[RMDB]
RNA sequence: GGGAACGACUCGAGUAGAGUCGAAAAGAUAUGGAUGUGAUUGAGGAACUACGACUUGUCUCGGAAACGAGAUCCGGGUCGCCAAUGAUGUCACAUCCUAAGUCAAAGCAGAUCUUCGGAUCUGCAACCUUACAUAAUGGUUCGCCAUUAUGUAAGGAAAAGAAACAACAACAACAAC
Reactivity to 2A3 in 0.01 (KOAc 150mM, MgCl2 10mM, bicine 150mM(pH8.5), 24C), signal-to-noise 9, nucleotides 027 to 126: g040a020u060a040u150g010g000a000u000g010u010g010a010u020u060g040a050g060g070a150a130c180u210a070c300g010a000c010u040u050g020u020c000u000c000g010g000a060a040a030c010g000a000g000a010u000c130c050g070g000g010u010c010g020c040c010a180a300u180g030a020u090g020u010c000a000c000a000u000c000c000u000a050a010g020u010c040a080a080a040g000c000a000g000a010u000c000u070u140c290g140g000a010u000c000u000g000c000a000a000
Reactivity to DMS in 0.01 (KOAc 150mM, MgCl2 10mM, bicine 150mM(pH8.5), 24C), signal-to-noise 9, nucleotides 027 to 126: g010a030u010a300u000g000g010a020u000g020u000g000a030u000u000g000a250g000g010a110a070c110u020a250c010g010a020c010u000u000g010u000c000u000c000g000g000a070a080a140c000g010a010g000a020u010c300c110g000g000g010u000c000g000c030c100a110a160u010g000a140u000g000u000c000a010c000a000u000c000c000u000a020a070g000u000c030a100a100a140g010c000a010g000a010u000c000u000u010c210g030g000a010u000c000u000g010c000a020a030